The record gives the reactivity of an RNA of 177 nucleotides to 2A3 and DMS. 2A3 adducts were read by reverse transcription with SuperScript II with manganese. The 2A3 profile rests on 1,838 reads. Values cover nucleotides 27 to 126. It was measured as part of the RMDB library OK2TRN. The RNA was probed in 150 mM KOAc, 10 mM MgCl2 and 150 mM bicine (pH 8.5) at 24 C.
RNA sequence: GGGAACGACUCGAGUAGAGUCGAAAACGUACGGUACCAUGCUCAUGAGUCUCUAGAGUACGAGUACCUAGUGGUACCAUGCAUGCUAGGAUCGGAUCCGCACUAGGAGAGUGCGCGGUACGUACAGCGCAAGUGAACGCUUCGGCGUUCACUUGCGAAAAGAAACAACAACAACAAC
Reactivity to 2A3 in 0.01 (KOAc 150mM, MgCl2 10mM, bicine 150mM(pH8.5), 24C), signal-to-noise 2, nucleotides 027 to 126: c050g000u020a010c050g060g010u020a010c020c000a050u110g020c000u060c040a080u150g100a090g180u040c010u000c000u110a130g020a030g150u040a020c070g030a060g060u040a100c000c000u020a000g010u060g130g030u040a090c000c020a040u150g030c020a020u110g030c000u030a050g020g000a070u050c000g030g060a070u080c060c030g000c040a000c040u060a030g120g070a150g030a000g010u000g000c010g000c000g050g000u030a000c010g010u000a040c000a050g000
Reactivity to DMS in 0.01 (KOAc 150mM, MgCl2 10mM, bicine 150mM(pH8.5), 24C), signal-to-noise 2, nucleotides 027 to 126: c140g030u010a030c100g010g010u000a010c000c020a090u000g040c040u000c020a120u020g000a140g000u000c030u000c020u000a090g030a120g010u000a030c090g000a120g010u010a050c030c010u000a030g010u000g080g010u030a020c040c160a060u000g010c060a080u000g030c020u000a070g030g010a050u020c110g040g010a250u010c060c050g000c030a060c040u010a110g000g010a090g010a180g010u000g010c000g010c090g010g000u000a030c020g000u000a020c080a140g040